[RMDB]
RNA sequence: GGGAACGACUCGAGUAGAGUCGAAAAGCAUAACUUCUUCGGAAGUUAUGCAAAAAAGCGUACUACGCCAUACCGUCAACAGCCUUUCCCAAAUAGGAAAGGACAUGACGGGUGGACCCGUAUCGCAAAAAGGAUACGGAGUUCGCUCCGUAUCCAAGGUUCAGAAGACUUUCGAGUCUUCUGAACCAAAAGAAACAACAACAACAAC
Reactivity to 2A3 in 0.01 (KOAc 150mM, MgCl2 10mM, bicine 150mM(pH8.5), 24C), signal-to-noise 2, nucleotides 027 to 156: g020c000a000u000a000a000c000u000u000c000u050u030c300g050g000a020a030g010u010u010a000u000g000c000a000a130a000a000a000a000g060c040g030u070a070c010u010a000c050g000c010c000a050u100a300c020c000g000u030c000a070a080c050a150g080c000c000u030u020u000c020c010c010a280a150a070u250a110g000g000a000a000a000g010g040a040c010a190u030g000a000c040g030g000g000u000g000g000a000c070c000c020g010u020a030u300c050g000c060a030a100a070a000a020g030g070a010u010a000c000g010g020a020g000u100u110c210g060c040u000c010c000g050u100a040u050c020c010a010a000
An RNA of 207 nucleotides, treated with 2A3 and read out base by base. Source: RMDB library RNAMAK, as collected in RNAgym. 2A3 adducts were read by reverse transcription with SuperScript II with manganese. Conditions: 150 mM KOAc, 10 mM MgCl2 and 150 mM bicine (pH 8.5), 24 C.